[RMDB]
RNA sequence: GGGAACGACUCGAGUAGAGUCGAAAAACAGUCAUCCUUCACAGUCAUCAGGUGAGCAGACAUCAAACUCAGAACAGCCAGGGAUUGAGAAGAUGAGCAACAGUGGGACUCCUCAUACAAUGCUGGUGAAACAUCAUUUAUUACACCUGUUUUGAGAUCAUUAGGCGCUAUUCGUAGCGCCUAAUGAAAAAGAAACAACAACAACAAC
Reactivity to DMS in 0.01 (KOAc 150mM, MgCl2 10mM, bicine 150mM(pH8.5), 24C), signal-to-noise 1, nucleotides 027 to 156: a140c050a110g010u020c060a190u010c010c000u000u000c000a090c080a130g010u000c070a170u000c070a110g040g040u000g030a120g000c030a140g020a080c050a130u000c070a100a070a120c050u000c060a200g000a050a040c040a110g000c060c030a180g000g000g000a080u010u000g020a170g010a000a090g010a100u000g020a130g050c030a040a040c020a070g000u000g010g000g000a130c120u000c030c000u000c040a080u020a080c080a060a020u000g000c000u000g000g000u000g030a220a100a070c020a090u000c070a090u000u010u010a050u000u000a020c060a020c030c010u000g000u000u000u000u000g000a200g040a230
Reactivity to 2A3 in 0.01 (KOAc 150mM, MgCl2 10mM, bicine 150mM(pH8.5), 24C), signal-to-noise 3, nucleotides 027 to 156: a000c020a020g090u000c020a060u040c010c000u070u170c070a050c030a110g040u070c020a100u030c030a090g060g060u060g030a010g050c030a030g080a130c040a080u090c020a020a090a100c050u050c030a050g020a110a040c000a020g070c030c010a060g000g090g040a040u060u070g030a020g010a070a000g020a040u030g030a010g020c040a030a020c000a040g030u080g030g020g030a060c010u050c040c020u060c010a050u120a180c050a030a070u100g040c020u010g050g060u030g060a090a080a000c020a020u110c000a010u010u080u180a100u110u040a070c030a030c050c050u000g020u000u010u040u020g060a090g030a030